[RMDB]
RNA sequence: GGGAACGACUCGAGUAGAGUCGAAAAGAGAGGCAGCAACGUUUUUCAAUCCAUUGAUGAGUGCUUACCAACCAAGUAAGCUCAAUAGGGAAGCUUUCAAGAAGGACUUCUUCAAGUACAACAAACCCCCUACAGCUGAAUUCGUUCAGCUGUAGGGAAAAGAAACAACAACAACAAC
Reactivity to DMS in 0.01 (KOAc 150mM, MgCl2 10mM, bicine 150mM(pH8.5), 24C), signal-to-noise 2, nucleotides 027 to 126: g000a080g000a050g030g020c030a020g000c070a070a060c080g000u000u000u000u000u000c080a060a100u040c050c040a030u020u000g000a040u000g010a150g040u000g010c050u010u000a010c030c040a060a230c210c120a070a150g020u000a000a020g010c010u010c060a030a060u000a130g010g000g020a110a050g010c040u000u020u000c040a030a020g020a080a080g010g010a100c070u010u000c030u000u000c070a060a060g020u010a080c140a070a090c110a050a070a120c180c150
Reactivity to 2A3 in 0.01 (KOAc 150mM, MgCl2 10mM, bicine 150mM(pH8.5), 24C), signal-to-noise 1, nucleotides 027 to 126: g050a000g010a010g020g000c060a040g000c010a030a080c030g000u000u010u020u070u060c050a070a080u000c040c030a060u010u110g130a040u150g040a100g090u110g020c000u000u000a020c020c010a070a020c020c010a170a000g020u030a000a000g000c010u000c060a010a100u200a130g050g010g040a000a000g000c030u010u110u120c060a090a100g020a060a070g130g000a170c000u010u050c000u030u000c140a080a000g030u060a120c040a110a000c030a020a110a050c040c030